[RMDB]
RNA sequence: GGGAACGACUCGAGUAGAGUCGAAAAGUUGGCAAAAUCUACGAUGUGCCUACUGAGCACGCAAAGCACACUGUAGCACUGACCGACGACACGGGCCGCCACCGCAUUGCAACCGUAACGCACAACGGUGAAGGUCUUCGCUGGAAUAGCGGCGGCAUCACUUUUUCGUGUUCGCACGAAAAAGUGAAAAAGAAACAACAACAACAAC
Reactivity to 2A3 in 0.01 (KOAc 150mM, MgCl2 10mM, bicine 150mM(pH8.5), 24C), signal-to-noise 1, nucleotides 027 to 156: g000u010u000g040g000c020a030a030a000a120u030c000u000a030c050g080a140u040g000u070g060c020c010u050a140c070u120g080a080g140c160a050c220g000c050a040a020a000g000c000a000c000a000c020u060g000u000a000g090c040a050c160u110g090a290c000c000g010a000c020g010a000c030a030c100g130g050g030c010c030g000c030c000a040c000c000g000c000a000u010u120g040c010a040a020c040c010g050u070a040a050c080g100c080a080c000a070a190c030g000g000u000g070a090a020g010g000u000c000u050u040c000g000c040u110g040g020a180a110u150a060g040c000g070g000c000g000g000c000a010

This 207-nucleotide RNA was probed chemically with 2A3.
The RNA was probed in 150 mM KOAc, 10 mM MgCl2 and 150 mM bicine (pH 8.5) at 24 C.